[RMDB]
RNA sequence: GGGAACGACUCGAGUAGAGUCGAAAAAUGGCGCCUGAACCGCUCCGCCAGGCGCCGCAUGCGUCCCCGCAGUUCUUCUUCGUUGAGCCGAUUGAUGUCGCGCAGGACUUCGGUGGCGAACUGGCUGCAUACACAUAAGUUUCGACUUAUGUGUAUGAAAAGAAACAACAACAACAAC
Reactivity to 2A3 in 0.01 (KOAc 150mM, MgCl2 10mM, bicine 150mM(pH8.5), 24C), signal-to-noise 8, nucleotides 027 to 126: a010u040g000g010c000g010c010c000u030g030a080a040c070c040g040c110u070c040c020g050c030c000a010g010g000c000g010c040c000g000c020a040u210g040c020g050u030c000c000c000c020g000c010a010g000u060u030c010u050u000c010u040u060c030g100u070u110g080a030g040c020c010g040a060u050u240g150a120u280g050u050c020g000c030g000c100a040g040g070a040c000u010u010c030g010g020u040g010g000c010g010a020a020c020u020g080g010c020u040g010
Reactivity to DMS in 0.01 (KOAc 150mM, MgCl2 10mM, bicine 150mM(pH8.5), 24C), signal-to-noise 9, nucleotides 027 to 126: a100u000g010g010c010g020c010c000u000g000a060a090c110c090g010c040u000c030c050g010c150c000a020g000g000c010g030c000c010g000c130a030u000g010c140g010u000c010c010c010c140g010c030a030g000u000u000c030u000u000c080u000u000c040g010u000u000g000a160g010c020c010g000a060u010u010g010a110u010g010u000c020g010c140g020c090a080g010g010a080c020u000u000c010g010g010u000g000g010c080g000a020a030c070u000g000g010c040u000g010
The record gives the reactivity of an RNA of 177 nucleotides to 2A3 and DMS.
The RNA was probed in 150 mM KOAc, 10 mM MgCl2 and 150 mM bicine (pH 8.5) at 24 C.
The data come from the RNA Mapping Database (RMDB), library OK2TST.
High DMS reactivity at an A or C suggests that its Watson-Crick edge is free.
For 2A3, 27,540 sequencing reads were counted.